[RMDB]
RNA sequence: GGGAACGACUCGAGUAGAGUCGAAAAAGCCUUGGGCCAUCAAUCAGAUCUCUGUGCUUUGAGCCACUCAACUAUUGUGACGAGCUACUGCUGGUUAGGCACUGUCAAAGCUCACACUUAACUGUGCCAUCAACUGUGUGUUCGCACACAGUUGAUGAAAAGAAACAACAACAACAAC
Reactivity to 2A3 in 0.01 (KOAc 150mM, MgCl2 10mM, bicine 150mM(pH8.5), 24C), signal-to-noise 2, nucleotides 027 to 126: a000g010c020c000u040u050g040g020g010c060c020a080u050c030a010a150u060c020a020g100a220u040c090u020c010u080g080u040g030c020u040u060u120g030a030g000c010c020a040c050u060c000a070a100c040u110a090u140u200g020u040g070a100c050g040a010g000c020u110a080c000u070g060c010u040g000g120u070u060a060g020g000c020a000c030u080g030u130c100a000a000a100g020c020u060c050a020c010a000c010u040u040a050a020c050u020g030u060g050c000
Reactivity to DMS in 0.01 (KOAc 150mM, MgCl2 10mM, bicine 150mM(pH8.5), 24C), signal-to-noise 3, nucleotides 027 to 126: a070g000c010c020u020u010g020g010g020c030c040a070u010c120a110a080u010c110a040g000a060u010c090u010c040u000g010u000g020c060u010u000u000g030a170g020c060c030a070c090u010c050a030a070c090u000a080u010u000g030u000g020a090c040g020a040g010c020u000a050c060u020g010c060u010g010g000u010u010a080g030g000c000a050c040u000g010u000c080a050a040a030g010c050u000c240a070c090a070c020u000u000a050a030c050u000g000u000g010c080

The data come from the RNA Mapping Database (RMDB), library OK2TRN. Structure probing data (2A3 and DMS) for a 177-nucleotide construct. Reactivities are rounded to 0.1 and cut off at 0 and 3. For 2A3 the reverse transcriptase was SuperScript II with manganese. Values cover nucleotides 27 to 126.